[RMDB]
Notes: The record gives the reactivity of an RNA of 177 nucleotides to DMS. Source: RMDB library M2PK90, as collected in RNAgym. For DMS the reverse transcriptase was MarathonRT.
RNA sequence: GGGAACGACUCGAGUAGAGUCGAAAAUUGUGGUCAAGACCUUGGCGUAGUAUCCAAGGUUGUCAAGGUUCCUAUUGACUUAACAAUGAUAGAGUUUAUGUUAUGGUGUAAGGAUGGACAGGGGAAAAGCGUAGAGUUCGUUCGCGAACUCUACGCUAAAAGAAACAACAACAACAAC
Reactivity to DMS in 0.01 (KOAc 150mM, MgCl2 10mM, bicine 150mM(pH8.5), 24C), signal-to-noise 1, nucleotides 027 to 126: u000u000g010u010g030g010u010c040a060a080g000a040c000c000u000u000g010g010c200g020u000a150g020u010a180u000c050c060a030a080g000g000u000u010g010u000c080a080a050g010g000u020u020c040c160u000a120u000u000g000a040c050u000u000a130a000c050a050a020u010g000a180u000a080g000a100g000u000u000u000a060u020g020u000u000a060u000g020g010u000g010u000a090a050g000g000a080u010g000g000a020c050a010g000g000g030g020a120a040a090